The record gives the reactivity of an RNA of 177 nucleotides to 2A3 and DMS. Source: RMDB library M2PK50, as collected in RNAgym. For DMS the reverse transcriptase was MarathonRT. Conditions: 150 mM KOAc, 10 mM MgCl2 and 150 mM bicine (pH 8.5), 24 C. 2A3 adducts were read by reverse transcription with SuperScript II with manganese.
RNA sequence: GGGAACGACUCGAGUAGAGUCGAAAAUAGGUUGAAUUCGUUCAACCUACAGGCAAGCAACCAGCGCAACGAGACAAGGCGAUAAUAAGAUAGCGCAUGCUGAUACAUCGGUCUUCGGACCGAUGAAUAAUGACUGAUAGUUCGCUAUCAGUCAUUAAAAAGAAACAACAACAACAAC
Reactivity to 2A3 in 0.01 (KOAc 150mM, MgCl2 10mM, bicine 150mM(pH8.5), 24C), signal-to-noise 7, nucleotides 027 to 126: u050a000g000g000u000u010g010a020a020u090u090c180g040u050u000c010a000a000c000c000u000a030c010a020g080g000c040a020a040g000c020a030a110c030c030a040g020c010g000c030a030a060c040g050a020g030a100c060a090a040g080g040c050g060a030u060a170a060u110a120a090g110a160u120a060g040c030g000c030a030u070g000c010u030g010a040u020a230c000a000u000c000g000g000u000c000u020u030c200g030g000a000c000c000g000a000u000g000a000a000
Reactivity to DMS in 0.01 (KOAc 150mM, MgCl2 10mM, bicine 150mM(pH8.5), 24C), signal-to-noise 9, nucleotides 027 to 126: u000a000g000g010u000u000g000a010a030u000u010c180g020u000u000c000a010a000c000c000u010a010c120a080g010g010c070a060a080g010c050a070a110c070c040a090g010c060g020c060a070a090c080g010a100g010a070c120a060a070g020g010c030g000a060u000a070a070u010a090a100g000a090u000a050g010c030g010c060a090u010g010c060u000g000a140u000a140c010a010u000c000g000g010u000c000u000u010c190g010g010a010c000c000g010a000u000g000a050a070